[RMDB]
RNA sequence: GGGAACGACUCGAGUAGAGUCGAAAAGGAAAUUAGACAGUGGUUACAGCAUGAAUGUAGUCCGAUACAUAGGGCUUAUGUUUUGGGAAAAACGUAUGCUGGAAUUAUUUUUGUGAGAGACAAAAUGAAACCUGCUCUAAUUCGUUAGAGCAGGUUUAAAAGAAACAACAACAACAAC
Reactivity to 2A3 in 0.01 (KOAc 150mM, MgCl2 10mM, bicine 150mM(pH8.5), 24C), signal-to-noise 1, nucleotides 027 to 126: g000g060a050a050a070u090u060a060g100a090c060a040g080u070g040g040u040u060a040c010a000g000c000a000u030g000a080a040u150g040u020a040g020u000c020c000g020a010u000a050c010a010u070a020g270g080g210c030u060u010a020u030g030u000u050u020u000g030g010g010a050a010a000a000a050c010g010u040a000u020g020c000u000g020g000a000a030u050u020a050u020u080u060u060u030g030u020g040a040g010a000g030a030c010a030a040a050a020u160g030
Reactivity to DMS in 0.01 (KOAc 150mM, MgCl2 10mM, bicine 150mM(pH8.5), 24C), signal-to-noise 4, nucleotides 027 to 126: g010g000a080a080a110u020u010a050g020a130c100a030g020u000g010g010u000u000a060c010a000g010c010a010u000g000a090a040u010g000u000a090g000u000c020c000g000a040u000a030c050a040u010a040g000g010g030c160u020u000a010u000g010u000u000u000u010g020g010g010a040a020a020a080a030c020g000u000a010u000g010c000u000g000g000a040a040u000u000a030u000u000u000u000u000g000u000g000a120g000a230g000a100c040a020a030a030a100u020g000